Structure probing data (DMS and 2A3) for a 207-nucleotide construct. In probing experiments dimethyl sulfate is read out at A N1 and C N3, which are open when not base-paired. Conditions: 150 mM KOAc, 10 mM MgCl2 and 150 mM bicine (pH 8.5), 24 C. For 2A3, 675 sequencing reads were counted. Reactivities are given for positions 27 through 156. Source: RMDB library OK3TST, as collected in RNAgym.

[RMDB]
RNA sequence: GGGAACGACUCGAGUAGAGUCGAAAAAUGUACGGGAUAUAAAAUAUUCCGAUAUGCAAAAAUGCUACUUUAGCUAUAAGGGUAAAAUAGUUCCUCAGGAUUCUAAUGAUUUGGCUAGAUUCAACAUUUAUAGCAUUUGUGCUGCAUACAGAUCAAAGCAUGAGUAGGAUUUCGAUCCUACUCAUGCAAAAGAAACAACAACAACAAC
Reactivity to DMS in 0.01 (KOAc 150mM, MgCl2 10mM, bicine 150mM(pH8.5), 24C), signal-to-noise 1, nucleotides 027 to 156: a120u000g030u000a030c020g030g010g060a010u000a030u000a120a160a130a300u000a090u000u000c030c010g010a190u000a000u010g000c060a010a180a130a060a000u000g000c000u030a090c300u000u000u010a060g000c010u000a100u010a090a060g040g000g000u000a010a030a060a130u000a120g010u000u000c010c010u010c030a140g000g000a070u000u000c060u000a030a070u000g030a060u000u000u010g010g040c000u030a040g000a160u000u000c010a060a010c020a010u010u000u000a080u000a100g000c010a300u000u010u000g000u000g010c020u010g000c060a070u000a010c080a060g040a060u030c040a000a100a210
Reactivity to 2A3 in 0.01 (KOAc 150mM, MgCl2 10mM, bicine 150mM(pH8.5), 24C), signal-to-noise 1, nucleotides 027 to 156: a000u040g030u040a030c000g000g000g000a000u030a000u040a100a220a130a060u030a010u030u000c000c000g010a020u030a000u090g000c000a000a040a090a130a000u000g030c010u010a060c080u060u080u080a020g050c010u070a030u020a160a040g010g000g070u050a030a030a000a190u080a040g030u050u060c000c000u030c010a010g060g060a100u170u070c030u120a160a040u210g100a070u010u090u120g020g020c020u000a030g010a160u060u060c040a050a080c030a090u030u160u100a100u050a000g000c000a010u000u020u050g070u030g030c060u020g000c000a000u080a110c070a030g180a040u080c080a000a000a020